[RMDB]
RNA sequence: GGGAACGACUCGAGUAGAGUCGAAAAGAAACGCAAGGCCGCUGACCGACGGGAUAUUGUGGGGCUUACCACAGGGGACGCGGCGUUAUCACUUGCCUUUGAAGCCGACCGUCUGGGCUGCAUACAAACCACCCAACUAUCUUCGGAUAGUUGGGAAGCAUCAUUAAAUCUUCGGAUUUAAUGAUGCAAAAGAAACAACAACAACAAC
Reactivity to 2A3 in 0.01 (KOAc 150mM, MgCl2 10mM, bicine 150mM(pH8.5), 24C), signal-to-noise 4, nucleotides 027 to 156: g040a000a030a000c070g020c040a010a000g120g020c000c010g020c040u060g080a060c010c030g030a040c050g070g030g020a120u120a100u270u070g010u020g010g010g060g100c100u130u130a090c000c000a010c020a020g000g000g000g010a000c040g000c010g010g040c000g030u030u010a030u030c030a020c050u020u010g000c010c020u050u070u100g020a030a000g000c010c010g060a070c000c010g010u020c040u070g030g030g000c010u020g000c020a050u090a100c070a000a100a010c010c030a030c000c010c000a000a000c000u000a000u010c000u030u030c040g060g000a000u000a000g000u000u000g000g000g000a010a000
Reactivity to DMS in 0.01 (KOAc 150mM, MgCl2 10mM, bicine 150mM(pH8.5), 24C), signal-to-noise 2, nucleotides 027 to 156: g010a070a080a080c070g020c050a040a120g020g020c000c010g050c050u000g010a300c030c010g010a150c020g050g030g000a100u000a080u000u010g020u000g040g020g070g030c190u000u030a090c030c040a050c010a090g030g000g060g000a220c070g000c020g020g000c010g000u000u000a060u000c080a200c020u000u010g000c040c040u030u010u000g010a090a080g000c000c000g010a100c040c050g000u000c030u000g030g020g000c020u010g000c030a120u020a110c090a060a100a090c020c040a240c000c010c000a000a000c010u020a010u000c010u000u010c300g060g000a000u010a010g000u000u000g010g030g010a000a030